[RMDB]
RNA sequence: GGGAACGACUCGAGUAGAGUCGAAAAUUUAACGCUGUUUUAUUGGCGCAAAGGUUUACGGAUAAACAACUUAUAAUUAAACCUUUUGUGUGCGAAACGUGGUUGUUUAACGUACUCUUUAAUCGCUUUGGGGAUGUGUCCUUCGGGACACAUCCAACUAUCUUGCACAGUUCGCUGUGCAAGAUAGAAAAGAAACAACAACAACAAC
Reactivity to 2A3 in 0.01 (KOAc 150mM, MgCl2 10mM, bicine 150mM(pH8.5), 24C), signal-to-noise 2, nucleotides 027 to 156: u200u150u080a060a010c060g000c060u040g080u040u040u040u070a130u140u140g020g000c000g010c020a020a080a000g030g000u040u010u000a000c010g000g090a160u100a080a050a050c030a030a010c050u130u110a040u120a260a080u120u100a060a040a100c010c010u000u120u140u250g080u050g030u070g220c060g100a170a070a010c110g030u080g000g000u010u010g000u000u020u030a040a010c030g010u030a030c000u030c010u030u060u130a090a080u080c080g040c060u130u100u130g140g030g000g000a010u000g000u000g000u000c000c000u020u020c200g030g000g000a010c000a000c000a000u000c000c000a000a000